[RMDB]
RNA sequence: GGGAACGACUCGAGUAGAGUCGAAAAAACGCUAACUACCAUCCACUCACAUUUAUGGUCACUAUUUAACCAAUAUCGUGAGGCCAUUGAACGUCCAAGCGCGACUACUUCCUCCUCCCUAUUGGGUCUUGGUAGGGCAUUUGCAACUGUAAUAGAAGUUGAUUGUGUAGUUCGCUACACAAUCAACAAAAGAAACAACAACAACAAC
Reactivity to DMS in 0.01 (KOAc 150mM, MgCl2 10mM, bicine 150mM(pH8.5), 24C), signal-to-noise 1, nucleotides 027 to 156: a000a000c070g010c040u010a050a080c080u000a120c090c010a110u010c010c020a190c010u000c010a010c030a050u000u000u000a170u010g040g040u000c010a120c170u000a170u000u040u000a080a090c020c020a040a120u010a040u010c160g010u020g040a060g000g010c040c020a100u020u010g000a090a040c030g070u000c030c040a040a080g040c110g020c040g030a090c080u000a140c000u000u010c020c020u000c030c030u000c000c030c020u000a150u010u020g090g030g030u000c020u000u010g000g010u020a030g000g020g000c010a080u000u010u000g020c040a110a130c090u000g000u010a030a110u000a140g000a180a100
Reactivity to 2A3 in 0.01 (KOAc 150mM, MgCl2 10mM, bicine 150mM(pH8.5), 24C), signal-to-noise 3, nucleotides 027 to 156: a000a020c080g010c020u050a110a090c020u020a030c040c000a050u110c030c010a070c000u080c000a010c000a070u000u060u130a260u120g000g000u020c060a040c110u140a140u260u160u100a060a020c040c010a070a100u020a060u140c110g010u060g030a040g000g060c020c030a130u100u080g040a040a010c050g020u000c000c010a050a020g040c050g000c040g080a060c010u130a050c010u050u000c010c020u020c000c020u020c010c020c000u030a080u100u070g000g030g000u020c040u020u030g010g030u000a020g000g000g010c000a050u000u000u130g010c020a050a030c000u040g010u100a010a090u060a120g140a160a010

This 207-nucleotide RNA was probed chemically with DMS and 2A3. The RNA was probed in 150 mM KOAc, 10 mM MgCl2 and 150 mM bicine (pH 8.5) at 24 C. The DMS profile rests on 1,852 reads. For 2A3 the reverse transcriptase was SuperScript II with manganese. For 2A3, 1,272 sequencing reads were counted.